Chemical mapping of a 207-nucleotide RNA with 2A3.

[RMDB]
RNA sequence: GGGAACGACUCGAGUAGAGUCGAAAAGUGCGAGGAGUCACGGACGUUUGACCACCGCCGCGCGGCCUUUGACGGGGGUAAGUCGCCAAGCUGGUACUGCGAGGAGUGCGAUAGCCAUUACGUGCGUGAGGCCGACGAUUCGGGGCAUACGCUCGACACGCUAAGCAUGGUUCGCCAUGCUUAGCGUAAAAGAAACAACAACAACAAC
Reactivity to 2A3 in 0.01 (KOAc 150mM, MgCl2 10mM, bicine 150mM(pH8.5), 24C), signal-to-noise 1, nucleotides 027 to 156: g090u080g000c040g030a040g010g090a060g060u050c040a030c010g040g090a000c000g000u000u050u020g210a230c010c000a230c020c010g000c030c010g030c030g020c030g000g000c030c000u070u070u230g120a010c010g070g000g000g000g070u040a110a100g070u020c000g000c000c000a110a080g000c020u000g110g040u130a240c080u080g000c010g040a030g080g060a040g110u300g000c000g040a010u060a000g040c000c000a040u070u300a080c060g000u100g140c000g060u130g000a030g000g000c100c010g010a030c020g020a040u300u120c000g000g030g000g000c040a010u010a020c000g030c010u000c000g000a000c010

The data come from the RNA Mapping Database (RMDB), library OK3TST.